[RMDB]
RNA sequence: GGGAACGACUCGAGUAGAGUCGAAAAGAUAUGGAUCCUUUAUGGGAGUUGCAUCUCGGAAACGAGAUGAUAACGAAGAACAUAUGGGAUCCUAAGUCAAACGGCCGGUGGUUCGCCACCGGCCGAACGAGUCAAUAAAGUUCGCUUUAUUGACUCGAAAAGAAACAACAACAACAAC
Reactivity to DMS in 0.01 (KOAc 150mM, MgCl2 10mM, bicine 150mM(pH8.5), 24C), signal-to-noise 2, nucleotides 027 to 126: g010a030u000a030u010g010g000a010u000c000c010u000u000u010a010u000g000g010g010a140g010u000u000g000c020a010u000c000u000c000g010g000a010a010a060c010g010a010g010a020u000g000a010u010a010a020c000g010a130a180g030a170a190c000a040u000a000u000g000g010g000a010u000c000c000u000a000a050g000u010c000a090a200a290c090g020g020c000c010g060g030u000g010g040u020u050c250g030c020c000a010c000c000g010g000c030c010g010a020a050
Reactivity to 2A3 in 0.01 (KOAc 150mM, MgCl2 10mM, bicine 150mM(pH8.5), 24C), signal-to-noise 2, nucleotides 027 to 126: g010a000u020a000u030g000g010a000u000c000c000u000u020u020a020u030g030g060g040a300g040u020u050g020c020a000u000c000u010c010g010g010a000a000a000c010g010a000g000a000u000g010a050u080a030a000c010g090a280a170g100a100a020c000a000u010a010u010g000g000g000a000u000c000c000u010a000a030g020u030c010a040a120a210c050g030g000c030c050g070g040u030g070g140u100u160c300g070c120c020a000c010c000g000g000c000c000g010a000a000
The record gives the reactivity of an RNA of 177 nucleotides to DMS and 2A3.
2A3 adducts were read by reverse transcription with SuperScript II with manganese.
It was measured as part of the RMDB library TTRDES.
For DMS, 2,040 sequencing reads were counted.